[RMDB]
RNA sequence: GGGAACGACUCGAGUAGAGUCGAAAAAGCUUGAUUGGCGCUCGUAAAUCUGCAUUCAAAAAACCAACUGCAAACGACGAACGUUUCGCACUCGCCGCUUAAACACCGGUGAGCCUUGCAACAGCACGCUGAUGGGCUGGGCAAGGGGGCCGCAAGGGGUUAAUAGUACCUUCGGGUACUAUUAACCAAAAGAAACAACAACAACAAC
Reactivity to 2A3 in 0.01 (KOAc 150mM, MgCl2 10mM, bicine 150mM(pH8.5), 24C), signal-to-noise 1, nucleotides 027 to 156: a000g070c040u060u020g040a110u060u030g030g020c020g000c000u050c050g040u040a000a070a160u040c020u050g060c040a040u070u120c170a100a050a030a030a110a120c050c030a070a070c040u020g000c020a050a050a030c030g090a010c040g040a110a000c060g010u020u070u080c090g010c010a010c000u020c000g000c000c000g040c040u050u020a050a040a000c010a000c040c000g020g000u000g000a000g000c010c000u040u010g000c030a110a190c030a170g000c010a030c070g090c030u040g020a090u210g040g010g020c020u020g000g010g000c030a050a050g000g010g000g040g040c030c030g040c020a050a020g130g000
The record gives the reactivity of an RNA of 207 nucleotides to 2A3. For 2A3, 568 sequencing reads were counted. It was measured as part of the RMDB library ARCHII.